[RMDB]
RNA sequence: GGGAACGACUCGAGUAGAGUCGAAAAGUCACCAGUAUGAUGGUCUGGUAGAAUUAGCAACAAUUUGUGCUCUUUGUAAUGACUCUGCUUUGGAUUACAAUGAGGUAAGUCUCUUCAUAAAUUAGAAGGAAUGGCUGUUCCUAGUUCAAGGGUGGGGACAAGAUUGCUUAUUCGUAAGCAAUCUUGUAAAAGAAACAACAACAACAAC
Reactivity to 2A3 in 0.01 (KOAc 150mM, MgCl2 10mM, bicine 150mM(pH8.5), 24C), signal-to-noise 9, nucleotides 027 to 156: g070u040c030a010c020c010a010g060u100a090u180g190a110u140g050g090u020c010u010g030g000u070a100g040a090a090u130u100a050g040c030a020a140c020a110a220u060u120u280g060u060g020c010u010c010u050u080u060g080u080a080a120u150g050a050c010u020c020u060g060c030u090u080u120g070g030a060u070u080a070c050a050a090u140g020a020g040g030u050a040a030g000u000c030u000c000u040u000c020a090u160a280a200a090u200u120a090g020a040a000g040g050a090a060u140g020g000c030u020g020u040u030c010c000u020a050g040u040u070c050a040a030g040g000g040u090g010g010g010g000
Reactivity to DMS in 0.01 (KOAc 150mM, MgCl2 10mM, bicine 150mM(pH8.5), 24C), signal-to-noise 4, nucleotides 027 to 156: g000u000c040a080c030c020a130g030u000a060u010g010a160u000g020g030u000c000u000g020g000u000a090g010a060a110u000u000a080g010c030a050a080c060a060a150u000u000u000g040u000g010c030u000c050u000u000u000g020u000a050a090u000g010a060c020u010c030u010g000c040u000u010u010g040g010a120u000u010a040c060a060a100u010g010a090g010g000u000a050a080g010u000c020u000c010u000u000c030a110u000a040a080a160u000u000a110g010a090a060g020g010a040a070u010g010g010c030u010g020u010u000c030c010u000a070g000u000u000c060a070a120g000g020g030u010g010g020g010g010
The record gives the reactivity of an RNA of 207 nucleotides to 2A3 and DMS.
The reactions ran in a buffer of 150 mM KOAc, 10 mM MgCl2 and 150 mM bicine (pH 8.5), at 24 C.
For 2A3, 9,102 sequencing reads were counted.
Source: RMDB library OK3TST, as collected in RNAgym.
The DMS profile rests on 14,130 reads.